[RMDB]
RNA sequence: GGGAACGACUCGAGUAGAGUCGAAAAACCAUCAACGGGCUCGCUAUCAUCAGUUCGCCGCGGUUUGCCGCAGUCACAGUGGGCAGCGGCUCAGCGGGAUCGUUGACUCGGUCUGCGCCUUGAUGUGGCUACACUCCAGGUUCGCCUGGAGUGUAGCAAAAGAAACAACAACAACAAC
Reactivity to DMS in 0.01 (KOAc 150mM, MgCl2 10mM, bicine 150mM(pH8.5), 24C), signal-to-noise 2, nucleotides 027 to 126: a040c000c000a280u000c020a020a040c030g020g000g000c030u000c000g010c000u000a180u010c150a080u020c250a150g010u000u000c140g010c010c010g020c000g000g000u010u000u000g000c010c000g010c030a090g000u020c180a020c160a090g000u010g010g010g020c010a060g000c010g000g000c020u000c120a020g010c010g000g000g000a020u000c000g010u000u000g020a030c080u000c140g020g000u000c030u000g000c100g000c020c020u010u000g010a040u030g030u000g020
Reactivity to 2A3 in 0.01 (KOAc 150mM, MgCl2 10mM, bicine 150mM(pH8.5), 24C), signal-to-noise 1, nucleotides 027 to 126: a000c020c000a030u000c000a020a020c020g010g010g000c000u010c030g000c040u060a030u210c050a030u010c020a090g070u210u110c090g000c000c000g000c030g130g050u080u100u110g020c000c020g020c040a020g050u180c070a040c020a210g020u060g040g010g000c000a010g000c010g000g010c030u000c010a010g010c010g020g000g010a030u010c000g000u040u020g000a010c040u000c110g000g010u030c030u090g030c040g080c040c000u020u100g120a060u100g060u090g070

Background: Conditions: 150 mM KOAc, 10 mM MgCl2 and 150 mM bicine (pH 8.5), 24 C. The record gives the reactivity of an RNA of 177 nucleotides to DMS and 2A3. Values are in units of 0.01, from 0 to 300, in steps of 10. For DMS, 1,470 sequencing reads were counted. Reactivities are given for positions 27 through 126. DMS adducts were read by reverse transcription with MarathonRT.